[RMDB]
RNA sequence: GGGAACGACUCGAGUAGAGUCGAAAAGAAGCAGUUUAUUUCCUUAGUUAGCUACCAUCCUAGAGGUCCCCAAGAGUGUUGCUCAGGUUAGACUUGGAGCAAAUGAGGGGAUUAAGCCGUGGAAAUGAGAAGCACCUGCCCUUGUCUACGAGCCUGGACCCCUCCAUAUAUUCGUAUAUGGAGGGGUAAAAGAAACAACAACAACAAC
Reactivity to 2A3 in 0.01 (KOAc 150mM, MgCl2 10mM, bicine 150mM(pH8.5), 24C), signal-to-noise 1, nucleotides 027 to 156: g030a090a000g000c030a000g000u030u180u080a100u000u060u060c010c000u030u040a160g040u060u080a000g020c010u040a090c010c000a010u100c000c030u140a150g020a070g140g010u000c000c010c000c010a000a040g120a020g210u160g020u060u000g000c000u010c000a000g060g100u020u160a040g120a280c020u020u060g080g060a010g000c000a010a000a000u030g000a000g020g000g030g000a000u000u000a000a000g000c010c020g040u090g000g080a130a270a070u130g030a070g020a070a000g030c030a040c090c010u020g020c010c000c000u020u020g010u030c010u070a110c080g070a010g080c010c120u080g130g040
Reactivity to DMS in 0.01 (KOAc 150mM, MgCl2 10mM, bicine 150mM(pH8.5), 24C), signal-to-noise 1, nucleotides 027 to 156: g000a090a070g020c020a090g020u010u000u000a080u010u010u010c020c040u000u010a120g000u000u000a110g040c040u000a120c010c070a090u010c070c010u000a120g010a210g030g010u010c020c000c000c000a030a270g020a300g020u000g040u000u000g020c010u000c010a000g030g000u000u010a100g010a160c020u010u000g110g000a000g000c000a020a020a000u010g000a170g000g020g020g000a050u000u000a040a210g020c050c000g000u000g000g000a050a050a110u010g000a090g000a150a110g010c020a050c030c010u000g000c000c020c000u000u000g000u000c020u000a090c050g020a070g000c020c000u000g010g010

This 207-nucleotide RNA was probed chemically with 2A3 and DMS. The reactions ran in a buffer of 150 mM KOAc, 10 mM MgCl2 and 150 mM bicine (pH 8.5), at 24 C. The data come from the RNA Mapping Database (RMDB), library OK3TST.